Notes
Source: RMDB library OK2TRN, as collected in RNAgym. Chemical mapping of a 177-nucleotide RNA with DMS. Values cover nucleotides 27 to 126.
RNA sequence: GGGAACGACUCGAGUAGAGUCGAAAAGCCGAGCUGGCGAGAAGUGAUCAAGUUCUGGUGAAGUCGAAGGGCCUGGAAUGGUCUGGCGUAGAGGGUGAGACCCCUGUAGACGUAAGCUGGAGCCUUCCCCUGCUCAUUCGUUCGCGAAUGAGCAGGGAAAAGAAACAACAACAACAAC
Reactivity to DMS in 0.01 (KOAc 150mM, MgCl2 10mM, bicine 150mM(pH8.5), 24C), signal-to-noise 1, nucleotides 027 to 126: g010c010c070g000a190g000c140u000g010g040c000g010a100g020a080a040g010u000g040a130u010c130a040a170g000u010u030c000u020g000g020u000g000a090a260g000u000c000g010a060a050g000g000g030c000c010u000g010g030a300a070u000g010g010u000c010u000g010g050c010g020u000a010g000a070g000g010g000u000g000a290g010a160c120c000c010c000u000g010u000a190g030a040c050g000u000a090a300g000c060u010g000g000a030g020c030c100u000u010c050

Record summary: Conditions: 150 mM KOAc, 10 mM MgCl2 and 150 mM bicine (pH 8.5), 24 C. For DMS the reverse transcriptase was MarathonRT.